Chemical mapping of a 207-nucleotide RNA with 2A3. Source: RMDB library OK3TST, as collected in RNAgym. The reactions ran in a buffer of 150 mM KOAc, 10 mM MgCl2 and 150 mM bicine (pH 8.5), at 24 C. The 2A3 profile rests on 598 reads.
RNA sequence: GGGAACGACUCGAGUAGAGUCGAAAACUGGAUGAAGCGGACGUUCUUGUCAACAUUUGCGCCGAUAGUCGUGUCAAUGUCGACGACGUCGGGAAUCCACGUCGGGAUUGGACGGUCGCCGGUGAGGAUCGCAACGCGUCGGAUGUGCUUGCAGGGGCUGGGUAGGCUGUUUCGACAGCCUACCCAGAAAAGAAACAACAACAACAAC
Reactivity to 2A3 in 0.01 (KOAc 150mM, MgCl2 10mM, bicine 150mM(pH8.5), 24C), signal-to-noise 1, nucleotides 027 to 156: c000u010g060g020a060u050g090a050a040g180c020g150g000a030c010g000u030u030c060u060u110g010u050c040a000a000c020a070u030u050u160g010c020g000c020c010g100a050u130a130g060u120c050g030u030g030u110c070a050a100u160g020u200c040g000a000c010g010a000c030g000u030c060g000g000g080a120a020u000c030c030a040c040g180u150c040g010g000g050a020u110u100g070g050a050c050g040g000u040c030g040c160c000g000g030u020g000a050g010g010a020u050c060g000c100a030a040c020g020c020g070u120c060g040g110a090u060g020u070g010c080u000u030g010c030a000g000g000g040g000